[RMDB]
RNA sequence: GGGAACGACUCGAGUAGAGUCGAAAAUAACUUCUGUGCUAGAUGCAAAUACCAUCAGGCAUUUUGGGUCAUGGGACUAUGUUUUGAGAUCCAGACACAGUUUGCCAUUGGGGUAAGGAAAGGGUGGAAUCCCCUCUAGAUUCGUCUAGAGGGGAUUAAAAGAAACAACAACAACAAC
Reactivity to DMS in 0.01 (KOAc 150mM, MgCl2 10mM, bicine 150mM(pH8.5), 24C), signal-to-noise 6, nucleotides 027 to 126: u010a110a110c110u000u000c040u010g020u010g020c040u000a100g010a080u010g000c070a060a100a150u010a090c090c010a030u010c090a300g000g010c000a010u000u000u010u000g010g000g000u000c010a090u000g020g000g010a050c010u000a050u000g020u000u000u000u000g010a060g000a060u000c020c010a030g000a020c030a020c020a010g000u000u000u000g010c010c010a090u000u000g010g010g000g010u010a050a090g000g010a040a060a060g000g000g010u010g010g010
Reactivity to 2A3 in 0.01 (KOAc 150mM, MgCl2 10mM, bicine 150mM(pH8.5), 24C), signal-to-noise 2, nucleotides 027 to 126: u080a020a010c040u080u040c010u090g100u050g030c030u040a080g000a140u090g040c060a040a060a170u100a040c010c000a040u120c060a030g040g000c000a020u000u010u020u060g040g010g040u030c130a190u050g070g000g030a010c040u060a040u300g120u030u140u050u100g090a060g000a030u040c010c010a000g030a010c040a000c000a050g030u020u020u050g000c010c000a010u040u080g050g030g000g000u020a050a000g040g000a160a020a030g030g020g010u090g010g030
Source: RMDB library OK2TRN, as collected in RNAgym.
Chemical mapping of a 177-nucleotide RNA with DMS and 2A3.
For 2A3, 1,261 sequencing reads were counted.